[RMDB]
RNA sequence: GGGAACGACUCGAGUAGAGUCGAAAAGCCAGUUGUUCCGCCAGGAGCACUGCUGGUUAGCUACGUUCGGAAGGGAUAACCGCUGAAAGCAUCUAAGCGGGAAGCCUGUUCCAAGAUGAGGUUUCUCCCCAGUACCUAAUUUCGAUUAGGUACUGGGAAAAGAAACAACAACAACAAC
Reactivity to DMS in 0.01 (KOAc 150mM, MgCl2 10mM, bicine 150mM(pH8.5), 24C), signal-to-noise 5, nucleotides 027 to 126: g040c010c020a010g020u000u010g020u000u000c010c010g010c260c300a140g000g000a030g020c020a020c300u010g030c010u000g030g020u010u010a070g000c080u000a070c090g010u000u020c150g000g000a060a200g000g000g000a020u000a150a290c010c000g000c000u000g010a090a150a150g000c090a040u010c070u000a200a040g000c020g010g000g000a040a110g010c000c000u000g010u010u000c000c000a080a110g000a090u020g010a090g000g000u000u000u000c010u000c130
Reactivity to 2A3 in 0.01 (KOAc 150mM, MgCl2 10mM, bicine 150mM(pH8.5), 24C), signal-to-noise 6, nucleotides 027 to 126: g010c000c010a000g010u030u020g010u010u000c010c030g080c110c100a180g000g010a000g000c020a020c090u090g020c000u010g000g020u050u020a030g020c030u090a050c090g100u060u130c070g020g000a010a000g030g000g010a000u010a070a070c000c010g000c010u030g090a100a080a060g100c030a080u070c050u120a050a020g000c000g000g010g000a030a030g010c000c010u100g260u070u000c000c000a010a020g040a060u130g050a040g110g000u010u000u000c000u010c000